[RMDB]
RNA sequence: GGGAACGACUCGAGUAGAGUCGAAAAGCCACUAGCAUCUUUGGCGGGAUAGAUGGCUCCUACAAGGACGUCGAGGACGGAAAGUUUUAUCAGCAAGGGGACUUGGAUGUGCACAUGAAAGAACUGACAGGAACUAUCAGUUCGCUGAUAGUUCCUGAAAAGAAACAACAACAACAAC
Reactivity to DMS in 0.01 (KOAc 150mM, MgCl2 10mM, bicine 150mM(pH8.5), 24C), signal-to-noise 3, nucleotides 027 to 126: g020c010c010a070c090u000a100g040c090a070u010c060u000u020u000g010g000c060g000g000g000a110u010a060g010a100u010g010g020c020u000c030c020u000a070c090a090a110g020g000a070c060g010u000c050g000a090g010g020a030c080g020g000a090a100a070g020u000u000u010u000a090u010c060a040g020c080a040a080g010g000g000g000a110c070u000u010g010g010a010u010g020u000g000c050a070c090a050u000g010a050a060a140g010a080a130c070u020g010a210
Reactivity to 2A3 in 0.01 (KOAc 150mM, MgCl2 10mM, bicine 150mM(pH8.5), 24C), signal-to-noise 1, nucleotides 027 to 126: g060c000c060a010c050u090a010g090c020a040u000c060u020u100u130g090g020c120g050g000g050a090u010a050g160a110u060g000g020c020u080c000c000u050a100c040a020a110g110g020a020c010g000u010c050g110a050g060g000a010c020g030g000a060a000a010g010u050u020u000u160a050u080c010a000g060c010a030a010g080g000g000g010a020c040u040u000g050g000a020u050g000u060g010c040a020c050a080u120g160a100a060a120g070a090a090c050u050g010a010